[RMDB]
RNA sequence: GGGAACGACUCGAGUAGAGUCGAAAAGAUAUGGACUCCGUGAGGGAGGCGGUCGGAAACGACCGGCCUUUGAUCUCAUGGAGUCCUAAGUCAAACCAAGGAAUGUACUUCGGUACAUUCCUUGGAACUUCGACUAAAACUUCGGUUUUAGUCGAAGAAAAGAAACAACAACAACAAC
Reactivity to DMS in 0.01 (KOAc 150mM, MgCl2 10mM, bicine 150mM(pH8.5), 24C), signal-to-noise 1, nucleotides 027 to 126: g000a010u000a280u000g010g010a020c000u000c000c000g010u000g010a020g010g010g010a010g010g010c010g000g000u010c010g020g010a070a060a120c000g010a020c000c010g020g010c010c000u000u000u040g010a080u010c000u000c000a000u000g010g000a000g000u000c000c000u000a000a020g000u000c020a100a160a220c000c000a020a010g020g000a000a000u000g000u000a000c000u000u020c150g040g010u010a020c000a010u000u000c000c000u000u000g000g000a020a080
Reactivity to 2A3 in 0.01 (KOAc 150mM, MgCl2 10mM, bicine 150mM(pH8.5), 24C), signal-to-noise 1, nucleotides 027 to 126: g000a000u060a040u110g000g000a000c000u000c000c020g030u020g000a000g040g180g000a010g020g000c000g000g010u040c000g060g000a070a040a060c040g010a010c030c050g100g060c000c000u190u200u190g130a090u070c000u010c000a010u000g030g020a010g010u000c000c000u010a000a000g010u000c000a000a010a090c000c000a000a000g000g000a010a010u010g000u030a000c040u060u190c300g060g010u000a010c010a000u000u030c000c010u000u000g000g000a000a000